[RMDB]
Annotation:
Structure probing data (2A3 and DMS) for a 177-nucleotide construct. The RNA was probed in 150 mM KOAc, 10 mM MgCl2 and 150 mM bicine (pH 8.5) at 24 C. The data come from the RNA Mapping Database (RMDB), library OK1LIB. High 2A3 reactivity points to a flexible backbone, as in loops and unpaired stretches. DMS adducts were read by reverse transcription with MarathonRT.
RNA sequence: GGGAACGACUCGAGUAGAGUCGAAAAGAAGAGAGUCGACGCAAGCGACGAUAACUGCGGAACGGUAACCGUAGUACCGUACGGUCAUGGCACGCGAAAGCGAAAGACCGCAGCAUGCCAUAAGAGAAGUACCGAGUACGUUCGCGUACUCGGUACUAAAAGAAACAACAACAACAAC
Reactivity to 2A3 in 0.01 (KOAc 150mM, MgCl2 10mM, bicine 150mM(pH8.5), 24C), signal-to-noise 1, nucleotides 027 to 126: g120a090a040g090a030g020a010g030u090c010g010a040c000g040c120a000a010g020c010g000a080c000g020a000u010a100a050c030u040g000c000g000g090a270a000c100g010g010u080a100a110c000c000g010u040a100g000u000a040c020c020g000u000a020c010g000g080u080c000a000u000g010g000c020a010c000g040c000g030a260a000a000g000c000g020a000a000a090g120a070c000c010g000c020a000g000c000a000u030g000c000c000a000u060a000a020g170a000g050a090
Reactivity to DMS in 0.01 (KOAc 150mM, MgCl2 10mM, bicine 150mM(pH8.5), 24C), signal-to-noise 2, nucleotides 027 to 126: g030a150a070g000a020g010a190g010u000c030g030a130c020g000c180a110a050g000c050g000a000c000g010a090u070a130a140c000u000g000c010g000g000a010a070c130g050g000u030a020a150c000c050g070u000a020g020u030a050c090c020g030u000a090c070g000g010u000c240a030u000g030g000c010a100c090g090c010g000a180a030a060g000c040g030a170a060a090g000a030c090c030g000c050a080g000c000a000u010g000c070c000a000u000a070a050g000a300g000a090